[RMDB]
RNA sequence: GGGAACGACUCGAGUAGAGUCGAAAAGGAUUGAAAGUAAGUUGAUAAUGACCAAGUCAAGGUCCAGGCUGGCAACAGAGCAGACAGAGCGAGGCACAUCGAUGGGUAGCGAGGAAAGUCGACUUAAAGUCGUCCAAAGGAAAUAACAAUGUAAACUACUACACACAAAGUUCGCUUUGUGUGUAGUAAAAGAAACAACAACAACAAC
Reactivity to DMS in 0.01 (KOAc 150mM, MgCl2 10mM, bicine 150mM(pH8.5), 24C), signal-to-noise 1, nucleotides 027 to 156: g000g000a120u010u000g030a120a050a090g010u000a110a070g000u000u000g020a110u000a130a140u010g010a080c000c000a040a030g020u000c060a070a140g020g000u000c020c070a060g020g010c000u010g010g010c110a080a120c080a100g020a050g040c060a150g000a040c050a070g000a110g000c060g020a100g010g050c070a100c090a010u060c070g010a070u000g000g000g010u000a060g040c100g010a070g000g000a090a060a080g000u000c030g020a050c000u070u000a070a030a070g040u000c010g030u000c010c060a010a040a050g010g020a110a040a050u000a020a120c020a120a090u000g000u020a090a030a180c150u000
Reactivity to 2A3 in 0.01 (KOAc 150mM, MgCl2 10mM, bicine 150mM(pH8.5), 24C), signal-to-noise 2, nucleotides 027 to 156: g060g000a070u070u120g050a070a050a020g100u120a030a060g070u080u030g060a090u070a150a070u210g030a000c000c040a070a070g080u080c080a030a010g060g000u010c020c020a020g000g020c010u030g010g000c000a030a030c030a100g020a010g020c020a000g010a010c010a000g050a000g020c020g010a020g040g030c020a000c000a140u030c040g070a080u070g000g000g050u020a020g020c020g010a000g000g000a110a050a000g020u040c010g020a000c020u000u120a030a040a080g000u020c020g020u000c020c020a030a030a050g060g060a080a170a000u100a010a050c060a040a070u150g040u120a050a080a000c000u020
Description: The record gives the reactivity of an RNA of 207 nucleotides to DMS and 2A3. The data come from the RNA Mapping Database (RMDB), library ARCHII. The RNA was probed in 150 mM KOAc, 10 mM MgCl2 and 150 mM bicine (pH 8.5) at 24 C. The DMS profile rests on 1,633 reads.